[RMDB]
RNA sequence: GGGAACGACUCGAGUAGAGUCGAAAACAAGAGCAAACUAACUGUAAUACUAGUUCCUUAGCUUAUUACGAACCUGUGCAGGGUCGUAAAAUGCUGAUGGCUCUUCUUUCUGAUAAUGCCUAUCUCACAUGAACGUUGAGUUCGCUCAACGUUCAUGAAAAGAAACAACAACAACAAC
Reactivity to DMS in 0.01 (KOAc 150mM, MgCl2 10mM, bicine 150mM(pH8.5), 24C), signal-to-noise 2, nucleotides 027 to 126: c180a050a050g000a050g010c020a200a060a070c060u000a030a100c100u000g010u010a110a110u000a150c100u000a070g000u000u000c220c120u000u000a020g030c000u020u000a280u000u010a000c000g010a000a030c010c000u020g010u020g010c180a090g010g000g010u010c010g020u000a000a010a040a060u000g000c000u000g000a050u000g000g000c020u010c030u000u000c100u000u000u010c050u010g020a090u010a050a090u010g030c060c060u000a110u010c040u000c030a240
Reactivity to 2A3 in 0.01 (KOAc 150mM, MgCl2 10mM, bicine 150mM(pH8.5), 24C), signal-to-noise 2, nucleotides 027 to 126: c030a010a020g020a010g020c010a080a060a070c020u060a000a000c020u070g070u300a170a040u110a250c040u030a010g030u030u050c000c000u000u020a000g000c000u010u100a060u040u000a080c010g020a110a070c010c020u080g070u160g180c190a040g000g010g010u000c000g000u000a000a000a000a000u080g020c000u000g000a040u060g040g000c010u000c000u040u040c010u050u130u000c020u030g110a100u090a150a030u130g050c020c010u050a070u060c020u000c020a050

About this RNA: Conditions: 150 mM KOAc, 10 mM MgCl2 and 150 mM bicine (pH 8.5), 24 C. An RNA of 177 nucleotides, treated with DMS and 2A3 and read out base by base. For 2A3 the reverse transcriptase was SuperScript II with manganese.